[RMDB]
The record gives the reactivity of an RNA of 177 nucleotides to 2A3 and DMS. Source: RMDB libraries RFM100 and RFMREP, as collected in RNAgym. DMS adducts were read by reverse transcription with MarathonRT. Conditions: 150 mM KOAc, 10 mM MgCl2 and 150 mM bicine (pH 8.5), 24 C. High DMS reactivity at an A or C suggests that its Watson-Crick edge is free. 2A3 adducts were read by reverse transcription with SuperScript II with manganese.
RNA sequence: GGGAACGACUCGAGUAGAGUCGAAAAACUGACUGGUGAUGCUGAUAUUGGAGUGCAUCUGAGGCUGUUGUAGAAAUAACAUGGGUUGUUGAUUACAACAUUGCCAAUGAUUAUAACCCAAGAACAGACUUGGUGUAACAUUCGUGUUACACCAAGUAAAAGAAACAACAACAACAAC
Reactivity to 2A3 in 0.01 (KOAc 150mM, MgCl2 10mM, bicine 150mM(pH8.5), 24C), signal-to-noise 8, nucleotides 027 to 126: a000c060u060g110a030c040u060g040g050u100g070a090u110g050c010u020g010a040u030a070u190u030g030g020a170g040u060g020c020a010u000c000u000g020a020g020g000c010u000g010u010u000g000u010a010g070a040a060a020u080a020a020c090a130u300g280g260g030u020u020g010u000u010g050a140u070u030a000c000a010a000c010a020u050u200g000c000c000a010a010u020g000a000u020u040a030u050a090a060c010c000c010a010a020g050a090a030c020a010g060
Reactivity to DMS in 0.01 (KOAc 150mM, MgCl2 10mM, bicine 150mM(pH8.5), 24C), signal-to-noise 9, nucleotides 027 to 126: a130c060u000g000a090c090u000g000g000u010g010a050u010g010c010u000g010a070u020a140u000u000g000g000a110g010u000g020c210a030u000c020u000g010a300g000g000c010u000g000u000u000g000u000a010g000a110a020a020u000a010a020c020a220u020g020g010g030u000u000g010u010u000g000a220u020u000a010c020a000a010c000a030u020u030g020c010c000a020a170u000g000a020u000u020a100u040a140a100c030c010c000a030a050g000a090a220c130a070g000